[RMDB]
RNA sequence: GGGAACGACUCGAGUAGAGUCGAAAAGGACGUACAAGUGGAAGAGAUCAUUGGAGCGACCAACCUCGCUUCGCUGGGUAUGGAUUCCCUCUUGUCUCUGACGGUUCUUGCCAAACUACGGGAAUCGAGAUACAGACCACUUCGGUGGUCUGUAUCUAAAAGAAACAACAACAACAAC
Reactivity to DMS in 0.01 (KOAc 150mM, MgCl2 10mM, bicine 150mM(pH8.5), 24C), signal-to-noise 2, nucleotides 027 to 126: g000g010a060c070g040u000a070c070a050a060g000u010g020g010a110a040g000a130g040a030u000c080a120u020u000g010g020a110g030c150g020a100c050c010a080a080c230c170u000c100g010c040u000u000c030g010c020u000g000g020g020u000a070u030g010g010a200u000u000c000c000c020u030c100u000u000g020u000c020u000c010u000g020a250c050g010g030u000u000c010u010u000g000c070c070a090a080a110c150u020a140c120g000g020g020a030a030u000c030g020